[RMDB]
RNA sequence: GGGAACGACUCGAGUAGAGUCGAAAACGAUAAGCAUUCGUGCUUAUCGACGGUACGAAAGUACAAAGGAGCUAAAGCAUCGGCUCCUAAAAACGAUGCAAAAGACAACGGGGUUCGCCCCGUUGAACCAUAGGGAAAAGUUCGCUUUUCCCUAUGGAAAAGAAACAACAACAACAAC
Reactivity to DMS in 0.01 (KOAc 150mM, MgCl2 10mM, bicine 150mM(pH8.5), 24C), signal-to-noise 4, nucleotides 027 to 126: c040g010a000u000a000a010g000c000a030u000u010c190g030u000g020c000u000u000a000u000c000g010a060c230g010g020u000a000c010g000a140a090a160g010u000a000c000a120a140a170g010g000a000g010c000u000a050a080a150g010c000a000u000c000g000g000c010u010c000c010u000a000a010a010a000a030c050g010a010u000g010c000a110a060a100a100g010a200c010a010a000c000g010g000g000g030u000u010c280g000c010c000c000c000g010u000u000g010a040a140
Reactivity to 2A3 in 0.01 (KOAc 150mM, MgCl2 10mM, bicine 150mM(pH8.5), 24C), signal-to-noise 6, nucleotides 027 to 126: c010g000a000u000a010a000g000c000a010u040u140c230g090u040g000c000u010u000a000u000c000g000a010c050g080g000u010a000c010g030a130a040a030g000u000a010c030a030a180a080g010g000a010g000c020u100a250a100a040g010c010a010u010c010g010g020c000u000c010c010u040a030a010a000a000a000c010g000a000u000g000c010a060a030a060a030g100a030c010a000a000c000g000g010g000g030u050u070c180g130c010c000c000c000g000u000u000g000a000a020